[RMDB]
Notes
An RNA of 177 nucleotides, treated with DMS and 2A3 and read out base by base. 2A3 is a SHAPE reagent: it acylates the 2'-hydroxyl of flexible nucleotides of all four kinds. It was measured as part of the RMDB library RFM100. The reactions ran in a buffer of 150 mM KOAc, 10 mM MgCl2 and 150 mM bicine (pH 8.5), at 24 C. The DMS profile rests on 1,198 reads.

RNA sequence: GGGAACGACUCGAGUAGAGUCGAAAAUAAUAACCAUAGCGAUCUCCUCAGAUGCAAGGCCAUGAAAUUAGCCACCUGCGUAUUUUUUUAUGCAAUUUAAAUGCCAGCGGCUAAGCUUUAAGACAACGAAACCGAGAAUUUUCGAAUUCUCGGUUUCAAAAGAAACAACAACAACAAC
Reactivity to DMS in 0.01 (KOAc 150mM, MgCl2 10mM, bicine 150mM(pH8.5), 24C), signal-to-noise 1, nucleotides 027 to 126: u000a080a100u030a170a150c040c010a110u020a080g030c030g000a030u020c000u010c000c000u000c100a080g000a080u040g030c100a000a090g000g010c000c080a150u000g020a100a100a090u000u030a040g000c040c000a080c220c090u010g000c040g040u000a000u020u000u020u030u020u040u080a030u110g000c180a070a040u000u000u000a030a050a070u010g000c000c020a030g010c220g010g010c000u000a000a030g000c130u000u030u000a050a060g000a050c110a040a050c150
Reactivity to 2A3 in 0.01 (KOAc 150mM, MgCl2 10mM, bicine 150mM(pH8.5), 24C), signal-to-noise 1, nucleotides 027 to 126: u130a000a000u040a000a080c000c010a110u070a020g070c020g040a050u000c000u010c010c000u040c040a010g030a040u090g050c010a000a000g030g020c000c010a020u090g060a070a120a000u040u000a000g000c000c000a070c030c030u090g070c060g020u020a010u000u060u170u000u000u000u130a120u160g060c020a050a040u000u020u050a090a010a000u000g040c000c000a010g010c000g030g010c020u030a040a000g000c000u010u040u110a060a070g020a010c030a040a080c100